[RMDB]
RNA sequence: GGGAACGACUCGAGUAGAGUCGAAAACAUCGCGACUUCGGUCGCGAUGAAAGUUGUGCUGCCUCACGCAUAACAAAUCCCAAUGAGGGUAGGUGACUGCAAAACGACACGCCUUCGGGCGUGUCAACCUUUCGCUAACAUUCGUGUUAGCGAAAGGAAAAGAAACAACAACAACAAC
Reactivity to DMS in 0.01 (KOAc 150mM, MgCl2 10mM, bicine 150mM(pH8.5), 24C), signal-to-noise 2, nucleotides 027 to 126: c000a000u010c000g010c010g020a020c000u000u010c170g040g020u000c000g020c000g000a000u000g010a010a050a110g020u000u000g020u000g010c030u010g000c050c020u000c040a110c300g020c000a000u010a020a030c010a040a220a110u000c000c020c000a150a070u010g000a000g010g010g000u010a010g010g010u000g000a130c070u010g020c060a030a030a130a160c110g000a000c000a000c000g000c000c000u000u010c200g010g000g060c000g000u000g010u000c010a000a020
Reactivity to 2A3 in 0.01 (KOAc 150mM, MgCl2 10mM, bicine 150mM(pH8.5), 24C), signal-to-noise 2, nucleotides 027 to 126: c010a000u000c000g000c000g020a000c000u060u050c260g130g000u000c010g020c000g010a000u000g000a000a000a000g000u000u000g000u000g010c000u060g050c000c020u040c000a030c080g000c000a010u030a020a000c010a020a120a020u030c010c000c000a010a060u170g030a020g000g020g030u040a010g030g060u050g030a090c030u040g000c020a040a000a040a100c070g000a010c010a000c000g020c010c010u060u100c230g040g010g000c020g040u000g000u000c000a000a000
An RNA of 177 nucleotides, treated with DMS and 2A3 and read out base by base. Reactivities are given for positions 27 through 126.